[RMDB]
RNA sequence: GGGAACGACUCGAGUAGAGUCGAAAAAGCGAUGAUACGUCAUCGCAACGAUUGCCUGAUCGUAAAACAGGAGACGGCCGUGGCGGCGACCACGUAAAAAAGCGUAACGUGGUCUACGGACCACGAAAAAAGCGCGGAACGUUCGCGUUCCGCGCAACCUGAUAAUCAUGUUCGCAUGAUUAUCAGGAAAAGAAACAACAACAACAAC
Reactivity to 2A3 in 0.01 (KOAc 150mM, MgCl2 10mM, bicine 150mM(pH8.5), 24C), signal-to-noise 3, nucleotides 027 to 156: a000g000c010g000a000u000g000a000u010a070c210g070u020c020a010u000c000g000c010a000a030c010g020a020u010u040g000c000c000u030g000a010u010c030g110u180a020a010a040a040c010a010g050g040a030g070a050c110g060g020c030c000g000u010g010g060c110g030g000c000g030a010c010c000a010c010g020u050a000a020a020a040a040a000g070c020g040u050a090a030c010g000u000g010g000u010c010u020a040c160g040g000a010c000c010a000c000g060a090a000a000a000a010a000g000c000g000c000g000g000a000a010c000g020u070u060c110g000c010g080u000u000c020c000g010c000g000c000a000a010